[RMDB]
RNA sequence: GGGAACGACUCGAGUAGAGUCGAAAAUAGGCUGACGCCAAGAUCCCGGAUAACCAGACAGGACACGAAAAGACAAUGACCUGCUUCCUGCCUGCCCUUGCCGGUGCCAACACCAUCUAUGGCGCCGCUCAAGGAUUACGUUCGCGUAAUCCUUGAGAAAAGAAACAACAACAACAAC
Reactivity to 2A3 in 0.01 (KOAc 150mM, MgCl2 10mM, bicine 150mM(pH8.5), 24C), signal-to-noise 1, nucleotides 027 to 126: u160a020g030g060c040u120g050a040c130g000c010c000a000a010g070a030u040c000c000c000g000g020a070u100a000a040c090c000a020g000a040c000a000g060g000a000c040a000c100g120a210a020a030a000g120a020c100a190a140u090g070a050c000c010u020g020c090u010u000c000c000u010g000c000c000u040g000c000c000c010u040u100g020c030c040g020g000u000g010c010c000a070a030c100a030c040c000a140u060c040u100a080u070g010g000c020g000c000c000g020
Reactivity to DMS in 0.01 (KOAc 150mM, MgCl2 10mM, bicine 150mM(pH8.5), 24C), signal-to-noise 2, nucleotides 027 to 126: u010a200g000g020c040u000g000a210c300g010c000c000a080a090g000a050u000c050c020c020g050g000a060u020a100a070c090c010a020g010a020c040a040g000g000a090c100a060c190g000a060a100a100a060g020a070c100a060a060u000g000a090c060c050u000g030c100u000u000c020c010u040g020c000c000u000g000c040c040c050u010u000g020c120c000g000g010u010g000c000c000a040a080c100a060c100c140a110u030c030u010a260u000g010g030c010g010c000c000g010

Overview: The record gives the reactivity of an RNA of 177 nucleotides to 2A3 and DMS. The RNA was probed in 150 mM KOAc, 10 mM MgCl2 and 150 mM bicine (pH 8.5) at 24 C. The DMS profile rests on 752 reads.